[RMDB]
RNA sequence: GGGAACGACUCGAGUAGAGUCGAAAAUAUGCCUCGAAAACUGAAAGGCUUCAACGUCUUCCACAACGGUGCGAACUUCGUCGGCGAAGUCGAAGAGCUCAACCUUCCGAAGCUCAAGCGCAAGAUGGAAGCGUGGCAAGGCAGCGGCAUGACCGGCCUUGCAUACGUGGUUCGCCACGUAUGCAAGAAAAGAAACAACAACAACAAC
Reactivity to 2A3 in 0.01 (KOAc 150mM, MgCl2 10mM, bicine 150mM(pH8.5), 24C), signal-to-noise 3, nucleotides 027 to 156: u220a050u030g000c010c010u010c040g080a120a110a070a080c110u150g070a150a110a070g070g020c000u080u070c050a050a030c010g020u030c010u000u000c010c000a020c000a070a050c110g100g010u030g010c040g050a040a010c010u010u010c000g070u030c080g130g140c070g050a040a020g020u010c010g090a140a060g030a040g010c010u010c040a020a130c020c020u150u160c070c070g030a030a000g000c000u040c100a080a070g000c010g000c030a030a070g040a130u070g000g000a000a010g010c020g000u010g010g030c050a040a050g040g000c010a030g020c000g010g000c020a030u060g040a040c000c000g030g010c020
Reactivity to DMS in 0.01 (KOAc 150mM, MgCl2 10mM, bicine 150mM(pH8.5), 24C), signal-to-noise 2, nucleotides 027 to 156: u000a010u000g010c000c000u040c080g010a080a090a040a210c090u000g000a120a070a180g000g030c010u000u010c070a120a090c000g000u000c010u000u020c000c000a050c060a140a140c030g020g000u000g040c150g010a120a040c000u000u000c030g050u000c280g010g020c000g010a080a100g000u000c020g020a140a110g000a260g050c000u000c040a080a060c030c000u000u000c070c060g030a050a070g040c030u000c050a100a130g030c050g000c010a050a060g000a280u030g030g000a030a090g010c010g030u010g000g000c030a090a050g010g020c050a070g040c020g010g040c010a050u000g000a300c030c000g000g000c050